RNA sequence: GGGAACGACUCGAGUAGAGUCGAAAACGCAACCGACCGGCACCGAAAACCACACGUUCAACUAUCUGGACCUGGUCAGAUAUCUGGCCGUCGGGAACCUCAACCCGUCGCCGCUGGGAUAUGUCGGGUAUUGCAACGCGUUCGCGCGUUGCAAUACAAAAGAAACAACAACAACAAC
Reactivity to 2A3 in 0.01 (KOAc 150mM, MgCl2 10mM, bicine 150mM(pH8.5), 24C), signal-to-noise 2, nucleotides 027 to 126: c100g020c030a010a040c030c000g040a020c020c030g040g000c030a030c010c040g040a050a030a040a040c000c010a070c030a060c060g010u040u040c020a100a130c090u130a190u090c050u100g000g040a030c030c000u010g010g000u000c030a000g020a050u140a030u060c050u020g010g000c000c040g030u040c010g040g010g040a020a000c010c090u060c030a030a060c010c000c000g010u040c010g030c160c040g000c030u030g000g060g050a030u030a100u100g090u040c030g160g000
Reactivity to DMS in 0.01 (KOAc 150mM, MgCl2 10mM, bicine 150mM(pH8.5), 24C), signal-to-noise 1, nucleotides 027 to 126: c000g000c220a000a150c000c020g000a140c000c000g000g000c000a130c020c030g030a200a150a030a040c030c040a040c030a040c160g030u000u000c080a060a020c260u000a020u000c070u000g000g010a000c000c110u000g010g000u010c000a000g040a100u010a050u000c060u000g000g000c060c050g030u010c170g050g000g000a000a030c020c100u100c120a090a010c100c010c000g000u000c070g010c130c170g010c050u070g000g040g000a060u000a020u000g000u090c000g100g040